[RMDB]
RNA sequence: GGGAACGACUCGAGUAGAGUCGAAAACCGUUGUAGUCCUAACCAUAAACUUUACUAUCCAAGAGUUGGAUUAGUUAUUUUAUACUCUUCCAGUACUUUUUGAGAAAUCAUAAGUCUUUGAGUUCUGGCCAUAGAAUAUAUUCGUAUAUUCUAUGGCAAAAGAAACAACAACAACAAC
Reactivity to 2A3 in 0.01 (KOAc 150mM, MgCl2 10mM, bicine 150mM(pH8.5), 24C), signal-to-noise 8, nucleotides 027 to 126: c020c020g020u020u060g050u040a080g050u030c020c020u050a050a030c040c020a060u080a100a070a020c010u020u060u100a030c030u040a040u010c010c010a030a010g040a050g080u060u010g010g000a010u010u020a000g000u020u050a110u060u190u050u050a130u050a030c000u010c000u030u010c020c000a010g070u030a050c020u030u140u060u050u050g170a200g030a090a040a030u090c050a050u030a120a020g020u000c050u070u090u080g090a110g020u040u040c040u050g030
Reactivity to DMS in 0.01 (KOAc 150mM, MgCl2 10mM, bicine 150mM(pH8.5), 24C), signal-to-noise 5, nucleotides 027 to 126: c020c020g020u030u000g020u000a070g020u010c050c040u010a100a150c090c040a060u010a050a080a040c040u000u010u000a110c180u000a110u000c010c030a030a080g000a080g000u020u010g020g000a020u010u000a010g000u000u000a070u020u020u020u020a070u020a060c010u000c020u000u000c040c030a040g000u010a040c000u000u000u010u010u010g000a080g000a100a080a100u010c050a040u010a020a030g000u000c040u000u000u000g010a120g010u000u000c100u000g010